Conditions: 150 mM KOAc, 10 mM MgCl2 and 150 mM bicine (pH 8.5), 24 C. This 177-nucleotide RNA was probed chemically with DMS and 2A3. Values are in units of 0.01, from 0 to 300, in steps of 10. 2A3 adducts were read by reverse transcription with SuperScript II with manganese. For DMS the reverse transcriptase was MarathonRT.
RNA sequence: GGGAACGACUCGAGUAGAGUCGAAAAUCGCUGUUGCAACCUACCUCAUCCUCUUCGCGCUGGUCGUGCUGUUCGUCGUGCCAGCCUCUCAAGCCAAUGGGCCGCUCGACGGCGAUACGCAGUGGCACACGUGAUACCGGUUCGCCGGUAUCACGUGAAAAGAAACAACAACAACAAC
Reactivity to DMS in 0.01 (KOAc 150mM, MgCl2 10mM, bicine 150mM(pH8.5), 24C), signal-to-noise 3, nucleotides 027 to 126: u000c060g030c040u010g000u000u000g000c050a070a080c040c020u010a090c070c020u000c070a130u000c030c020u000c050u000u010c080g000c130g030c050u000g010g010u000c020g000u010g010c020u010g010u020u010c050g020u000c040g000u000g040c050c030a060g000c010c020u000c090u000c060a060a140g000c060c190a130a100u010g020g020g010c020c130g010c010u000c090g020a050c060g010g000c000g000a060u000a050c080g030c070a030g010u000g000g010c020a230
Reactivity to 2A3 in 0.01 (KOAc 150mM, MgCl2 10mM, bicine 150mM(pH8.5), 24C), signal-to-noise 2, nucleotides 027 to 126: u050c030g000c070u060g030u180u060g000c050a070a030c000c020u050a050c010c010u060c020a070u060c000c000u000c000u080u090c060g020c030g000c030u000g030g040u080c000g020u080g020c050u040g050u070u130c030g020u020c020g030u020g040c000c000a000g010c000c010u000c000u020c050a100a040g060c030c000a050a090u050g000g000g000c010c020g000c000u040c020g080a050c030g010g000c020g020a030u030a040c020g000c020a020g030u050g020g050c040a010

Source: RMDB library OK2TST, as collected in RNAgym.